The record gives the reactivity of an RNA of 177 nucleotides to DMS. The reactions ran in a buffer of 150 mM KOAc, 10 mM MgCl2 and 150 mM bicine (pH 8.5), at 24 C. For DMS, 512 sequencing reads were counted. For DMS the reverse transcriptase was MarathonRT. It was measured as part of the RMDB library OK2TST.
RNA sequence: GGGAACGACUCGAGUAGAGUCGAAAAUUAACUUUAAGCCCCAUAGCCACUGCAUGCAUUGCUGAAAAACCAGUUAACAACCGCUUUAACUUUAAUAGCGAGCAAUUAGCUAGGCUAAGAAAAGCAACCAAACUGGUUAGUUCGCUAACCAGUUUGGAAAAGAAACAACAACAACAAC
Reactivity to DMS in 0.01 (KOAc 150mM, MgCl2 10mM, bicine 150mM(pH8.5), 24C), signal-to-noise 1, nucleotides 027 to 126: u000u000a040a120c080u000u010u000a170a100g010c060c000c000c120a150u030a050g050c010c050a080c070u000g000c010a060u020g010c060a080u000u000g000c080u000g000a060a050a050a070a020c140c080a050g010u000u010a020a050c150a070a070c090c110g000c060u000u000u000a110a080c090u000u000u000a040a160u010a010g000c050g000a030g000c110a090a170u010u010a120g010c010u000a130g040g000c050u020a050a080g000a020a010a120a010g010c140a080a180